[RMDB]
RNA sequence: GGGAACGACUCGAGUAGAGUCGAAAAGAUGCGGCCGCGAUGUAUGGCUAUGCCGGCUCGUCGGCCACUGCGUCGCAGUUGGCGCCGUUCAGCGAGCCGCCGCAAACGACCAAUCCGUCGGCAACGGCAGACGGGUUGAAUUCGUUCAACCCGUCUGAAAAGAAACAACAACAACAAC
Reactivity to DMS in 0.01 (KOAc 150mM, MgCl2 10mM, bicine 150mM(pH8.5), 24C), signal-to-noise 9, nucleotides 027 to 126: g010a150u010g010c100g010g010c020c070g010c030g000a090u010g010u000a060u010g000g010c020u010a130u010g020c020c010g000g000c010u000c090g020u010c020g020g000c010c020a040c060u000g010c060g020u010c130g010c030a030g000u000u010g030g020c040g010c030c040g010u010u000c130a170g010c000g000a070g010c010c040g010c080c090g000c050a030a070a130c110g010a130c040c020a070a110u000c040c050g010u010c020g000g010c040a100a140c050g000g000
Reactivity to 2A3 in 0.01 (KOAc 150mM, MgCl2 10mM, bicine 150mM(pH8.5), 24C), signal-to-noise 7, nucleotides 027 to 126: g080a050u110g020c020g020g000c020c010g000c030g040a060u130g050u130a020u040g030g000c020u040a100u210g000c000c000g000g010c020u050c070g240u020c020g030g010c020c000a060c040u070g010c090g120u120c120g000c000a020g010u110u080g060g000c060g000c000c020g030u080u090c040a020g020c010g030a030g010c000c010g000c000c010g000c010a090a090a010c050g080a120c010c010a010a070u060c030c010g030u060c030g080g010c050a090a040c020g040g000